[RMDB]
RNA sequence: GGGAACGACUCGAGUAGAGUCGAAAAGAUACCAUUAGCUGAUGCGGCUUGCGACCGUGUCGAAGGCCAUCUCUGUACCGAUGCGCUUACUCCGUUGAUUUCGGAUUAUUGCAAAAUGGUACUACGAGCAAUUAGCUUCAUUCGUGAAGCUAAUUGCAAAAGAAACAACAACAACAAC
Reactivity to 2A3 in 0.01 (KOAc 150mM, MgCl2 10mM, bicine 150mM(pH8.5), 24C), signal-to-noise 4, nucleotides 027 to 126: g040a050u130a040c010c010a050u120u140a030g040c090u100g020a010u030g030c040g000g020c040u040u100g040c060g090a080c020c040g030u010g000u030c010g040a060a050g060g000c000c020a060u020c050u000c050u120g060u050a040c000c040g010a010u020g010c020g030c060u010u030a050c020u020c010c000g010u030u060g200a260u100u180u090c000g000g020a010u000u030a110u130u100g010c000a030a020a000a070u060g000g010u000a000c020u050a030c050g090a020
Reactivity to DMS in 0.01 (KOAc 150mM, MgCl2 10mM, bicine 150mM(pH8.5), 24C), signal-to-noise 4, nucleotides 027 to 126: g010a100u000a120c010c020a140u010u000a190g000c060u010g010a020u000g010c030g010g010c000u010u020g010c220g010a260c020c020g010u020g010u000c020g020a130a090g020g010c020c070a070u000c020u000c080u010g030u000a030c040c060g010a050u000g020c300g000c010u000u000a040c170u000c000c000g010u000u000g010a210u020u020u010c010g000g000a040u000u000a040u000u010g020c010a020a100a030a090u000g010g020u000a020c030u000a110c180g000a130